[RMDB]
RNA sequence: GGGAACGACUCGAGUAGAGUCGAAAAGGUGCUGGCCAACCUCACUGCCAAGGUGUGGAUUGCUUCAGAGGACUGGGCCAUCUCCAGACACAUCAGCAGCGUGCCUGGCAUCUGGGGCAUUGGCACGCGGCUAUGGGCCGUUCGCGGCCCAUAGCCGAAAAGAAACAACAACAACAAC
Reactivity to 2A3 in 0.01 (KOAc 150mM, MgCl2 10mM, bicine 150mM(pH8.5), 24C), signal-to-noise 3, nucleotides 027 to 126: g080g000u090g030c010u070g050g030c040c010a010a070c050c000u000c010a030c010u030g030c040c040a140a180g000g000u050g000u060g110g140a300u100u090g000c020u060u140c060a070g040a060g100g070a130c050u030g020g020g020c060c030a070u060c040u000c020c020a010g010a050c040a020c010a170u110c010a010g010c000a010g030c000g070u060g010c000c000u010g000g000c000a020u030c060u090g020g050g030g000c120a150u050u080g010g000c010a000c020g060
Reactivity to DMS in 0.01 (KOAc 150mM, MgCl2 10mM, bicine 150mM(pH8.5), 24C), signal-to-noise 3, nucleotides 027 to 126: g020g020u000g000c010u000g020g000c060c020a100a150c020c010u000c010a050c080u000g000c040c100a050a070g010g030u000g020u000g020g010a160u000u010g000c020u000u000c110a060g000a110g000g010a120c090u010g010g020g010c170c120a080u010c220u010c010c010a050g010a130c070a070c050a100u000c110a020g000c030a040g010c040g010u000g000c000c000u000g000g000c060a040u000c080u010g010g050g000g010c050a090u000u000g000g010c000a030c060g010